[RMDB]
RNA sequence: GGGAACGACUCGAGUAGAGUCGAAAACUAUGUACAGACAGUACAGUGGAUAAGGUCUAUGGAUAUCCAACUUGAACAAUGGUACUUGCAGUGGUAUCUAUCAAGAUAGGCAGGCUAUCAUAGAAAGAAGAUGUGUAUUGUUCGCAGUACGCAUCUUAAAAGAAACAACAACAACAAC
Reactivity to DMS in 0.01 (KOAc 150mM, MgCl2 10mM, bicine 150mM(pH8.5), 24C), signal-to-noise 9, nucleotides 027 to 126: c020u000a060u010g010u000a010c020a120g020a130c260a130g010u000a010c010a030g010u020g000g010a110u020a070a080g010g000u010c010u000a020u000g000g010a050u000a010u000c010c010a100a150c020u000u000g010a040a080c250a050a070u020g000g010u000a010c000u000u010g010c220a100g010u030g000g000u000a000u000c000u000a070u010c040a020a010g000a080u020a060g010g010c140a100g000g000c080u000a020u000c010a020u000a020g000a040a080a080g010
Reactivity to 2A3 in 0.01 (KOAc 150mM, MgCl2 10mM, bicine 150mM(pH8.5), 24C), signal-to-noise 9, nucleotides 027 to 126: c010u020a040u060g010u000a010c020a070g190a030c030a030g050u010a010c000a010g020u050g090g040a100u060a150a060g090g030u010c010u010a010u030g040g040a020u010a010u010c000c010a010a020c010u010u010g010a100a010c070a060a130u140g000g000u010a010c000u020u090g120c080a050g030u060g100g000u010a000u000c000u000a050u020c020a020a000g020a080u040a040g050g050c070a020g020g000c000u010a000u030c000a000u010a010g030a020a060a010g100